Description:
The record gives the reactivity of an RNA of 177 nucleotides to 2A3 and DMS. DMS (dimethyl sulfate) methylates the pairing face of unpaired adenines and cytosines. For DMS the reverse transcriptase was MarathonRT.
[RMDB]
RNA sequence: GGGAACGACUCGAGUAGAGUCGAAAAGAUAUGGAUGUUCAAAGGGAGCAGUGGUCGGAAACGACCAUACUGCGAAGAACUUUAACAUCCUAAGUCAAACGUGCUCUAACUUCGGUUAGAGCACGAACCCAUUAUCUACCUUCGGGUAGAUAAUGGGAAAAGAAACAACAACAACAAC
Reactivity to 2A3 in 0.01 (KOAc 150mM, MgCl2 10mM, bicine 150mM(pH8.5), 24C), signal-to-noise 3, nucleotides 027 to 126: g000a000u030a000u090g000g000a000u010g010u060u150c300a120a080a050g040g050g030a220g020c000a010g040u000g020g000u000c000g010g010a020a010a000c000g010a010c020c020a000u060a010c010u000g000c000g140a050a060g060a000a000c000u020u000u050a000a000c010a000u020c000c010u000a020a000g020u000c030a190a020a070c020g010u000g000c000u020c010u010a000a020c010u090u060c260g090g010u010u000a000g000a000g000c000a000c000g000a010a000
Reactivity to DMS in 0.01 (KOAc 150mM, MgCl2 10mM, bicine 150mM(pH8.5), 24C), signal-to-noise 3, nucleotides 027 to 126: g010a030u000a060u010g000g000a010u010g000u000u000c300a020a010a020g000g020g010a110g030c000a010g000u000g000g000u000c030g000g000a010a010a120c000g020a030c010c000a010u000a030c010u000g020c000g050a090a190g000a160a300c010u000u000u000a020a000c000a000u010c020c010u010a010a100g000u000c000a070a150a300c000g030u000g010c010u000c010u000a000a010c000u010u010c250g030g000u000u000a000g000a020g000c010a000c000g000a030a070